The record gives the reactivity of an RNA of 177 nucleotides to 2A3 and DMS. The data come from the RNA Mapping Database (RMDB), libraries RFM100 and RFMREP. The RNA was probed in 150 mM KOAc, 10 mM MgCl2 and 150 mM bicine (pH 8.5) at 24 C.
[RMDB]
RNA sequence: GGGAACGACUCGAGUAGAGUCGAAAAGGCAACUCGUCAGAGAAGACGUUAAAACUAAAUCGAAGUAAAUGCUAACGACGAAAAGUUUGCAUUGGCCGCCUAACAGCCGCCUUGGGUUGUAACUGACUAGCGGUAUAAAGUUCGCUUUAUACCGCUAAAAAGAAACAACAACAACAAC
Reactivity to 2A3 in 0.01 (KOAc 150mM, MgCl2 10mM, bicine 150mM(pH8.5), 24C), signal-to-noise 2, nucleotides 027 to 126: g060g020c030a100a020c070u040c040g030u000c010a000g070a010g020a300a000g010a020c040g060u130u050a020a000a000a000c010u000a000a090a150u110c050g070a070a000g040u120a160a020a000u020g020c000u070a010a000c070g040a010c110g140a030a000a020a160g000u020u050u050g020c000a000u010u030g010g000c000c000g000c010c000u000a050a000c000a040g000c000c010g020c090c020u120u070g000g070g000u020u030g010u000a080a020c000u010g020a030c020
Reactivity to DMS in 0.01 (KOAc 150mM, MgCl2 10mM, bicine 150mM(pH8.5), 24C), signal-to-noise 3, nucleotides 027 to 126: g000g030c080a090a080c040u060c000g000u000c020a010g000a300g000a100a030g000a000c030g010u000u110a020a020a000a010c010u000a050a160a080u040c130g000a090a050g010u010a090a020a020u000g020c010u010a010a000c000g000a260c130g000a100a060a140a080g000u010u020u010g000c020a050u020u000g020g000c000c210g000c030c000u010a070a090c170a060g010c020c050g010c060c000u020u000g000g000g020u020u000g010u010a010a260c060u000g010a280c140